[RMDB]
RNA sequence: GGGAACGACUCGAGUAGAGUCGAAAAGGCAUGGCCCCAGCCUCCUCGCUGGCGCCGGCUGGGCAACGAUCCGAGGGGACUGUCCCUCUCGAGAAUCGGCAAAUGGGGCCCCUCGCUCGUAUCUCCGGCAAAAGUAUUACUUCGGUAAUACUUUUGCAAAAGAAACAACAACAACAAC
Reactivity to DMS in 0.01 (KOAc 150mM, MgCl2 10mM, bicine 150mM(pH8.5), 24C), signal-to-noise 1, nucleotides 027 to 126: g010g000c030a050u000g010g010c020c000c000c000a100g010c000c050u000c040c060u010c220g020c030u000g050g000c150g020c020c010g010g050c050u000g010g010g030c170a230a090c010g000a000u000c030c010g000a020g010g000g000g000a080c200u020g010u000c070c000c000u000c020u000c000g000a120g020a100a030u000c010g000g000c080a020a080a070u000g000g000g000g010c020c020c040c010u000c030g010c190u000c040g000u010a070u000c020u010c020c210g000
Reactivity to 2A3 in 0.01 (KOAc 150mM, MgCl2 10mM, bicine 150mM(pH8.5), 24C), signal-to-noise 1, nucleotides 027 to 126: g030g000c040a070u100g020g000c000c000c000c000a020g000c010c010u010c000c000u040c070g030c030u050g070g010c030g080c030c010g020g000c030u100g040g010g000c070a050a030c010g000a010u000c000c010g030a020g050g000g000g000a000c060u160g130u260c030c000c020u000c000u010c010g200a220g000a090a130u040c020g000g010c030a020a050a090u080g030g030g000g000c010c010c010c010u010c010g020c000u010c000g040u050a130u120c000u020c050c020g040